Chemical mapping of a 177-nucleotide RNA with 2A3 and DMS. The reactions ran in a buffer of 150 mM KOAc, 10 mM MgCl2 and 150 mM bicine (pH 8.5), at 24 C. For 2A3, 10,164 sequencing reads were counted. For DMS, 11,179 sequencing reads were counted.
RNA sequence: GGGAACGACUCGAGUAGAGUCGAAAACACAGGCAGCGGCGAAUAAUUGUGCGCUGCAUGCCUUUCGACCAGUGCCAUAGUGGCCUGAGUGGCAUCCGCGAGAUUUGUCAUGGGUGUAUCUCCAGCGCUACAGCUACAUUUUCGAAUGUAGCUGUAGAAAAGAAACAACAACAACAAC
Reactivity to 2A3 in 0.01 (KOAc 150mM, MgCl2 10mM, bicine 150mM(pH8.5), 24C), signal-to-noise 5, nucleotides 027 to 126: c060a010c020a010g010g000c000a010g000c010g030g000c020g040a070a050u220a180a140u210u250g100u120g140c010g000c000u000g000c000a010u000g000c000c000u040u070u070c060g040a040c010c010a030g030u040g170c030c010a110u140a250g130u140g090g020c000c010u030g040a050g020u050g050g000c000a000u020c020c020g010c060g030a050g050a210u130u210u240g110u060c040a040u050g010g000g050u030g020u020a080u030c030u000c010c030a060g050c070g000
Reactivity to DMS in 0.01 (KOAc 150mM, MgCl2 10mM, bicine 150mM(pH8.5), 24C), signal-to-noise 7, nucleotides 027 to 126: c130a110c170a060g020g010c010a040g010c000g010g000c010g020a070a080u000a100a150u020u010g020u010g030c010g020c010u000g000c010a030u000g010c020c010u000u020u000c090g010a130c070c020a080g010u010g020c010c010a130u010a110g030u010g010g020c010c000u000g010a090g020u000g010g000c020a030u000c020c020g030c070g010a080g010a160u000u000u010g020u000c020a060u000g000g010g020u000g000u000a080u000c030u000c040c070a100g010c170g010